[RMDB]
RNA sequence: GGGAACGACUCGAGUAGAGUCGAAAAAUAUACGUUAUGCAGGGUAGUAAAGUCUCCGGUUCAGAGUGUUAUCUGCUCAUUACUCUCGGACAUCAGAACACAGCUCCUUGCUAUGGAGAGGUGCGUGCUAGGUAGCGUUUUUCGAAACGCUACCUAGAAAAGAAACAACAACAACAAC
Reactivity to DMS in 0.01 (KOAc 150mM, MgCl2 10mM, bicine 150mM(pH8.5), 24C), signal-to-noise 2, nucleotides 027 to 126: a100u010a060u010a100c050g010u000u010a060u000g010c020a050g010g010g010u020a050g010u000a020a110a170g000u000c030u000c040c080g000g020u000u010c050a070g010a040g020u000g010u010u000a090u010c060u000g010c090u000c100a060u020u010a060c020u000c030u000c110g020g000a060c040a070u010c090a060g010a100a070c020a020c030a100g020c020u000c020c030u000u000g020c100u010a070u010g000g000a080g010a030g000g030u000g000c060g020u000g010
Reactivity to 2A3 in 0.01 (KOAc 150mM, MgCl2 10mM, bicine 150mM(pH8.5), 24C), signal-to-noise 2, nucleotides 027 to 126: a000u190a000u030a020c000g010u110u020a010u100g020c010a030g030g000g060u160a010g020u040a090a090a070g030u040c050u030c070c060g070g010u040u040c030a010g000a000g030u070g040u070u080a070u050c060u100g030c050u040c060a040u050u070a030c000u040c020u040c100g040g010a000c010a090u130c070a010g100a160a000c050a020c040a040g000c000u000c000c040u050u040g020c020u000a110u100g020g000a060g000a000g000g070u050g000c030g000u050g030